[RMDB]
RNA sequence: GGGAACGACUCGAGUAGAGUCGAAAAGAUAUGGACGUGUGGUCCUUCAACAGCUUCUGUCGGAAACGACAGAAGACAUGAAGCGACCCACGUCCUAAGUCAAAACGGCCUUGUUCGCAAGGCCGAACGACAUACCGAUGUUCGCAUCGGUAUGUCGAAAAGAAACAACAACAACAAC
Reactivity to DMS in 0.01 (KOAc 150mM, MgCl2 10mM, bicine 150mM(pH8.5), 24C), signal-to-noise 2, nucleotides 027 to 126: g000a050u000a300u000g010g010a000c000g010u000g020u010g050g030u000c000c020u000u000c000a050a070c300a200g000c000u020u000c000u010g010u020c000g010g030a130a090a240c000g020a060c000a000g000a010a000g000a020c080a150u000g010a000a020g050c200g000a030c000c000c010a010c010g000u000c000c000u000a000a060g010u000c110a100a030a120a300c030g010g000c010c000u000u000g010u000u020c260g000c020a010a000g000g060c000c000g000a010a030
Reactivity to 2A3 in 0.01 (KOAc 150mM, MgCl2 10mM, bicine 150mM(pH8.5), 24C), signal-to-noise 2, nucleotides 027 to 126: g040a020u100a030u170g000g000a000c010g010u050g250u300g010g000u020c020c060u020u000c040a200a180c060a110g040c000u000u010c000u000g020u000c000g110g000a070a110a150c010g000a000c000a000g000a000a000g000a000c000a060u120g020a000a010g040c100g170a000c000c000c000a010c000g000u020c000c000u000a000a000g000u010c010a000a010a070a130c010g000g000c000c000u010u000g040u110u080c300g030c080a000a000g010g000c040c000g000a000a010
Source: RMDB library TTRDES, as collected in RNAgym. An RNA of 177 nucleotides, treated with DMS and 2A3 and read out base by base. The RNA was probed in 150 mM KOAc, 10 mM MgCl2 and 150 mM bicine (pH 8.5) at 24 C. For DMS the reverse transcriptase was MarathonRT.